[RMDB]
RNA sequence: GGGAACGACUCGAGUAGAGUCGAAAAGGCCACUCGCUGGGCGUAUGAACCGCUACUGAAGCAUCGAUCGUCUGAAGCGCGCACGGACGGGAGCUUCAGCGGGCGUCCCAUACGCCUGUGCUGAAGCGCGCACGGCAACCGAAAGGUGCGAAGAUAAGAUUUUUAAUCAGUUCGCUGAUUAAAAAUCAAAAGAAACAACAACAACAAC
Reactivity to DMS in 0.01 (KOAc 150mM, MgCl2 10mM, bicine 150mM(pH8.5), 24C), signal-to-noise 1, nucleotides 027 to 156: g000g030c110c010a160c030u000c010g020c000u000g000g020g010c030g040u000a020u010g010a070a170c030c010g040c030u000a000c010u010g030a080a020g030c000a300u000c180g030a140u010c030g030u000c010u010g010a030a030g060c030g050c060g000c040a300c000g000g000a030c020g010g000g020a090g020c020u000u020c010a000g020c010g000g000g020c030g020u000c100c020c010a070u050a030c000g000c000c010u000g000u000g010c000u010g010a020a060g020c000g040c070g020c010a300c010g000g010c000a050a130c000c000g000a150a130a190g040g030u000g010c020g030a060a020g010a150u000a100a300
Reactivity to 2A3 in 0.01 (KOAc 150mM, MgCl2 10mM, bicine 150mM(pH8.5), 24C), signal-to-noise 2, nucleotides 027 to 156: g120g030c020c010a000c020u010c010g000c010u020g000g000g000c000g020u010a000u010g040a120a120c050c000g000c010u010a010c000u010g010a000a000g010c010a040u300c040g010a010u000c000g030u010c000u020g050a160a030g000c010g000c000g000c000a010c000g010g010a000c000g000g020g010a020g010c000u010u010c000a000g000c130g180g030g000c000g020u050c000c010c000a010u010a000c000g000c020c010u000g000u000g000c000u020g020a130a040g000c000g000c000g020c000a010c010g020g000c010a000a010c000c000g060a100a010a020g000g000u010g000c020g020a030a000g000a020u180a070a050

This 207-nucleotide RNA was probed chemically with DMS and 2A3. It was measured as part of the RMDB library RNAMAK. The reactions ran in a buffer of 150 mM KOAc, 10 mM MgCl2 and 150 mM bicine (pH 8.5), at 24 C. For DMS the reverse transcriptase was MarathonRT.